The record gives the reactivity of an RNA of 177 nucleotides to 2A3 and DMS. The DMS profile rests on 7,139 reads. It was measured as part of the RMDB library TTRDES. Reactivities are given for positions 27 through 126.
[RMDB]
RNA sequence: GGGAACGACUCGAGUAGAGUCGAAAAGAUAUGGAGCCUCUACCCUUCUGAUGACCGGUCUUCGGAAACGAAGACCGCAAGGAACGGUAGAGGGCUCCUAAGUCAAAGAUGUCGUUCGCGACAUCAACCAUUAUGUGAUGUUCGCAUCACAUAAUGGAAAAGAAACAACAACAACAAC
Reactivity to 2A3 in 0.01 (KOAc 150mM, MgCl2 10mM, bicine 150mM(pH8.5), 24C), signal-to-noise 5, nucleotides 027 to 126: g040a010u100a070u190g000g000a000g010c010c000u000c000u000a010c020c030c000u040u020c040u090g300a300u170g050a110c080c010g000g010u010c010u000u000c000g040g010a100a060a030c020g000a010a000g000a000c010c000g000c010a050a150g010g010a040a020c030g000g000u010a000g010a020g020g000g000c010u000c000c000u000a080a020g040u010c050a090a080a140g010a010u000g010u020c020g030u090u160c300g010c010g150a000c000a010u010c010a010a060
Reactivity to DMS in 0.01 (KOAc 150mM, MgCl2 10mM, bicine 150mM(pH8.5), 24C), signal-to-noise 6, nucleotides 027 to 126: g000a060u000a300u010g000g010a010g010c000c000u000c010u010a010c000c000c110u000u000c000u000g000a160u010g000a090c300c000g010g000u000c010u010u000c000g010g000a100a110a210c000g020a020a010g010a010c010c000g000c020a030a170g000g010a000a010c300g000g000u000a000g000a020g010g000g010c000u000c000c000u000a020a100g000u000c030a120a140a160g000a000u000g000u000c000g020u000u010c240g020c000g010a020c000a010u000c000a080a200
For DMS the reverse transcriptase was MarathonRT.